[RMDB]
RNA sequence: GGGAACGACUCGAGUAGAGUCGAAAACCGGGGGUGACGCCUCGGUCCUCCCUUAGCAUCGGAGACCCGGGCCCCCUCCCAGGAAAGGGAACAGGGGGAAAUCGACCGGGUCCCGCAGAACCCGAUGAGAGGACUUCGUUCGCGAAGUCCAAAAGAAACAACAACAACAAC
Reactivity to DMS in 0.01 (KOAc 150mM, MgCl2 10mM, bicine 150mM(pH8.5), 24C), signal-to-noise 3, nucleotides 027 to 129: c050c010g020g000g000g020g040u000g060a000c300g010c000c020u010c050g010g030u030c030c030u000c030c010c070u000u080a070g040c020a070u020c020g040g000a160g030a070c010c030c000g020g000g020c010c010c010c030c030u000c080c000c000a160g030g100a130a260a100g020g000g000a280a020c260a060g060g010g010g000g140a060a030a010u070c100g050a140c000c000g010g000g110u020c020c010c090g020c080a130g000a210a070c060c020c010g020a040u040g030a100g020a100
Reactivity to 2A3 in 0.01 (KOAc 150mM, MgCl2 10mM, bicine 150mM(pH8.5), 24C), signal-to-noise 3, nucleotides 027 to 129: c000c000g000g000g000g010g000u100g070a050c020g110c040c010u010c000g000g000u000c010c010u020c000c000c000u020u120a080g030c020a060u070c000g000g000a080g000a080c000c000c000g000g070g000c010c000c000c000c000u030c000c000c000a070g110g130a270a120a100g030g000g000a100a050c110a160g000g000g000g000g000a020a040a120u200c080g050a070c000c000g000g000g000u000c000c000c000g000c010a030g010a030a010c000c000c000g000a050u040g060a060g040a040